Background:
Chemical mapping of a 177-nucleotide RNA with DMS and 2A3. Conditions: 150 mM KOAc, 10 mM MgCl2 and 150 mM bicine (pH 8.5), 24 C. High 2A3 reactivity points to a flexible backbone, as in loops and unpaired stretches. The data come from the RNA Mapping Database (RMDB), library TTRDEL.
RNA sequence: GGGAACGACUCGAGUAGAGUCGAAAAGAUAUGGAGUAUGGACAUGAAGAAGAUAUGUCGGAAACGACAUGCACCUUCAACAGCCCGCUACUCCUAAGUCAAACAUUUUCAGUUCGCUGAAAAUGAACACUUUACCCUAGUUCGCUAGGGUAAAGUGAAAAGAAACAACAACAACAAC
Reactivity to DMS in 0.01 (KOAc 150mM, MgCl2 10mM, bicine 150mM(pH8.5), 24C), signal-to-noise 5, nucleotides 027 to 126: g000a020u010a300u000g010g010a040g010u000a020u020g000g000a010c030a170u010g000a030a250g000a100a050g010a090u010a020u000g010u000c000g010g000a100a070a180c000g000a010c000a000u000g000c220a150c170c000u000u000c000a030a240c090a060g000c020c000c000g020c180u000a010c000u000c000c000u000a030a060g010u000c030a170a090a210c010a010u000u000u000u000c010a000g000u000u020c260g050c000u000g000a000a000a010a010u000g010a100a140
Reactivity to 2A3 in 0.01 (KOAc 150mM, MgCl2 10mM, bicine 150mM(pH8.5), 24C), signal-to-noise 4, nucleotides 027 to 126: g030a020u070a050u150g000g010a010g010u020a060u250g000g000a050c150a300u120g040a100a170g010a040a010g030a100u060a000u100g010u000c010g020g020a050a070a020c000g020a020c010a000u020g020c020a130c030c020u000u000c030a170a140c020a100g030c020c000c000g000c020u020a010c000u000c010c000u020a120a000g030u030c060a080a100a090c010a010u010u000u020u020c010a020g050u020u140c300g060c130u010g010a000a010a010a010u010g050a110a010